The data come from the RNA Mapping Database (RMDB), library M2RFPK.
Chemical mapping of a 207-nucleotide RNA with 2A3.
For 2A3 the reverse transcriptase was SuperScript II with manganese.
The 2A3 profile rests on 428 reads.
The RNA was probed in 150 mM KOAc, 10 mM MgCl2 and 150 mM bicine (pH 8.5) at 24 C.
[RMDB]
RNA sequence: GGGAACGACUCGAGUAGAGUCGAAAAAUACUUCUCAGGAUGGCGCGUUGCAGUCCAUCAAGAUCCAGGGACUGUACAGAAUUUUCCUAUACCUCGAGUCGGGUUUGGAAUCUAAGGUUGACUCGCUAAAACUUUACGUGGUUCGCCACGUAAAGAACUCUGACAAUUCCUUCGGGAAUUGUCAGAGAAAAGAAACAACAACAACAAC
Reactivity to 2A3 in 0.01 (KOAc 150mM, MgCl2 10mM, bicine 150mM(pH8.5), 24C), signal-to-noise 1, nucleotides 027 to 156: a000u120a050c060u070u050c010u000c000a040g090g050a000u040g040g090c050g010c000g110u000u030g050c000a020g000u000c000c000a070u050c070a020a020g100a050u000c050c020a000g070g000g000a000c000u020g040u000a010c060a040g190a140a080u000u000u020u090c000c000u100a140u010a120c000c000u040c050g000a000g050u000c000g030g000g030u020u110u110g000g000a020a050u000c050u140a150a110g110g090u070u170g050a010c000u000c000g080c100u190a060a060a110a140c000u000u060u000a020c000g000u010g000g000u020u140c250g050c040c000a000c090g000u000a010a020a000g000a000a000